[RMDB]
Structure probing data (DMS) for a 177-nucleotide construct. Values are in units of 0.01, from 0 to 300, in steps of 10. It was measured as part of the RMDB library M2PK50.
RNA sequence: GGGAACGACUCGAGUAGAGUCGAAAACACAUUCUAUUCGUAGAAUGUGGAACGUAGAGAGAUCGACAGCGUCGCAGCUAUGUCGAAGGAGGAAGAGCGCGCAGGGAUCGGGCUUCGGCCCGAUCAACUGACGUGUUCCGUUCGCGGAACACGUCAGAAAAGAAACAACAACAACAAC
Reactivity to DMS in 0.01 (KOAc 150mM, MgCl2 10mM, bicine 150mM(pH8.5), 24C), signal-to-noise 2, nucleotides 027 to 126: c020a000c000a000u010u010c000u000a000u000u000c210g010u000a000g010a010a020u010g030u000g010g010a090a060c140g020u020a060g000a120g000a200g010a090u010c010g000a030c000a080g010c040g030u000c210g010c170a160g000c060u000a050u000g000u000c040g000a000a080g030g020a150g000g010a070a020g010a070g000c000g010c030g020c040a070g010g000g000a010u000c000g000g010g020c000u000u000c240g060g000c000c000c010g000a000u000c000a050a050

Conditions: 150 mM KOAc, 10 mM MgCl2 and 150 mM bicine (pH 8.5), 24 C.